[RMDB]
RNA sequence: GGGAACGACUCGAGUAGAGUCGAAAAGUGUUGUGUUCGCACAACACAAAAAGCGUACUACUACGAGCCUGUGCUACAACAGCGUUUCCCAAAUAGGAAACGACAUGUAGGCAGGACCCUCGUAGUAUCGCAAAAAACGGCCUGUUCGCAGGCCGAAGUAACCUUAGUCCUUCGGGACUAAGGUUACAAAAGAAACAACAACAACAAC
Reactivity to 2A3 in 0.01 (KOAc 150mM, MgCl2 10mM, bicine 150mM(pH8.5), 24C), signal-to-noise 2, nucleotides 027 to 156: g000u000g000u010u000g010u000g010u000u070c160g180c110a000c000a010a000c000a010c090a030a050a030a100a000g030c030g060u160a120c040u000a010c000u010a010c020g000a000g120c000c010u010g000u120g300c000u040a010c020a130a030c030a080g030c000g000u000u010u000c040c020c040a110a300a150u300a070g000g000a010a000a000c000g170a060c000a060u080g000u000a000g000g000c000a000g000g050a000c190c000c000u020c010g000u020a000g000u000a000u000c000g020c010a110a000a000a000a000a000c010g020g000c030c000u020g050u110u100c230g010c140a000g000g000c000c010g000a050a010
The record gives the reactivity of an RNA of 207 nucleotides to 2A3. 2A3 is a SHAPE reagent: it acylates the 2'-hydroxyl of flexible nucleotides of all four kinds. The reactions ran in a buffer of 150 mM KOAc, 10 mM MgCl2 and 150 mM bicine (pH 8.5), at 24 C. For 2A3 the reverse transcriptase was SuperScript II with manganese. For 2A3, 1,246 sequencing reads were counted. Source: RMDB library RNAMAK, as collected in RNAgym.